[RMDB]
RNA sequence: GGGAACGACUCGAGUAGAGUCGAAAACAUUAAACUCAAGCUGAACGAUGCGGCCACGGCGCGCGAGUGGCAGAAUCGUUCGAGAGAGGUGCGCCUAAAAAAUUAUGACCUUGAAAUAGAUUUCGACGGACCGAUAAAGAUUUUCGUAGCCGCGUCGCAACUACCUUCCUUUCGAGGAAGGUAGUUGAAAAGAAACAACAACAACAAC
Reactivity to 2A3 in 0.01 (KOAc 150mM, MgCl2 10mM, bicine 150mM(pH8.5), 24C), signal-to-noise 1, nucleotides 027 to 156: c030a030u030u120a060a140a130c000u000c180a090a050g080c110u100g000a020a000c010g000a000u060g070c070g130g000c000c000a000c010g030g000c020g000c060g010c100g260a040g020u010g010g000c000a000g090a030a000u040c010g070u020u000c030g000a000g000a000g000a010g000g110u020g010c000g050c010c000u010a080a090a000a060a090a050u170u140a220u300g150a040c020c010u030u070g060a110a000a000u050a040g190a200u110u160u170c000g050a050c010g000g000a030c010c010g010a060u160a140a300a130g150a110u300u140u000u050c150g030u070a020g060c100c000g120c040g040u040c020g010
Chemical mapping of a 207-nucleotide RNA with 2A3. The RNA was probed in 150 mM KOAc, 10 mM MgCl2 and 150 mM bicine (pH 8.5) at 24 C. It was measured as part of the RMDB library OK3TST. For 2A3, 379 sequencing reads were counted.